[RMDB]
RNA sequence: GGGAACGACUCGAGUAGAGUCGAAAACGUAAGGAACGCACGCCCGCAGACAUCGUCUGAGCUGAUUUUCUUUCUCCCGCCUGUGCGUGGCCUGAGAGUGUGAGGUUGAGCUGCUCACCACGCGGGGCAGGGCGCUGCGCCUGCUCUUCUGCCCCAAGUCCAUCCAUACUUUCGAGUAUGGAUGGACAAAAGAAACAACAACAACAAC
Reactivity to 2A3 in 0.01 (KOAc 150mM, MgCl2 10mM, bicine 150mM(pH8.5), 24C), signal-to-noise 1, nucleotides 027 to 156: c090g000u030a070a100g050g000a190a140c030g000c030a000c030g000c060c010c040g060c020a000g000a060c010a230u130c260g060u030c080u060g000a040g010c070u010g070a100u170u110u130u040c090u030u120u090c030u120c070c010c050g070c000c040u160g050u110g050c020g000u000g000g000c090c110u060g010a020g030a050g000u120g010u080g040a100g100g090u150u150g030a040g000c060u170g010c000u020c000a010c050c000a030c000g000c030g020g020g000g010c030a050g000g000g000c000g020c110u000g000c010g000c010c060u000g010c000u000c000u240u010c000u000g020c000c000c000c010a060a000
Conditions: 150 mM KOAc, 10 mM MgCl2 and 150 mM bicine (pH 8.5), 24 C. An RNA of 207 nucleotides, treated with 2A3 and read out base by base. Values cover nucleotides 27 to 156. Values are in units of 0.01, from 0 to 300, in steps of 10. For 2A3 the reverse transcriptase was SuperScript II with manganese. The 2A3 profile rests on 650 reads.